[RMDB]
RNA sequence: GGGAACGACUCGAGUAGAGUCGAAAAGAUAUGGACUACCCACCCUUGAGGCGCGAUGAAAUCUUUCGGAAACGAAAGAUGGAGCGUGUAGAGGAGGUCCUAAGUCAAACGGAUGUUCGCAUCCGAAGAACAUUUUGGUGUUCGCACCAAAAUGUUCAAAAGAAACAACAACAACAAC
Reactivity to 2A3 in 0.01 (KOAc 150mM, MgCl2 10mM, bicine 150mM(pH8.5), 24C), signal-to-noise 1, nucleotides 027 to 126: g000a010u110a050u070g000g000a000c000u100a170c070c000c000a060c060c000c000u020u010g070a080g300g000c000g030c000g300a300u110g060a010a010a010u000c000u000u040u010c040g000g020a130a070a080c010g040a000a020a010g000a010u010g000g000a000g010c000g020u180g010u140a050g010a020g100g040a000g000g030u000c000c010u010a270a050g170u140c100a110a050a020c000g010g000a000u020g000u070u140c300g050c090a000u000c000c000g030a090a040
Reactivity to DMS in 0.01 (KOAc 150mM, MgCl2 10mM, bicine 150mM(pH8.5), 24C), signal-to-noise 1, nucleotides 027 to 126: g020a020u000a170u000g000g020a040c000u000a190c000c000c010a300c210c000c000u000u000g010a200g000g010c010g000c000g000a100u000g010a060a080a000u000c000u000u010u000c000g010g000a070a070a100c000g000a020a000a010g020a000u000g030g010a030g000c000g000u000g000u000a290g000a010g000g000a060g010g000u000c000c000u010a040a130g020u000c010a110a070a300c010g010g010a020u000g010u000u000c190g000c000a000u000c000c000g010a030a080
The record gives the reactivity of an RNA of 177 nucleotides to 2A3 and DMS. DMS adducts were read by reverse transcription with MarathonRT. 2A3 is a SHAPE reagent: it acylates the 2'-hydroxyl of flexible nucleotides of all four kinds. The 2A3 profile rests on 1,201 reads. The RNA was probed in 150 mM KOAc, 10 mM MgCl2 and 150 mM bicine (pH 8.5) at 24 C.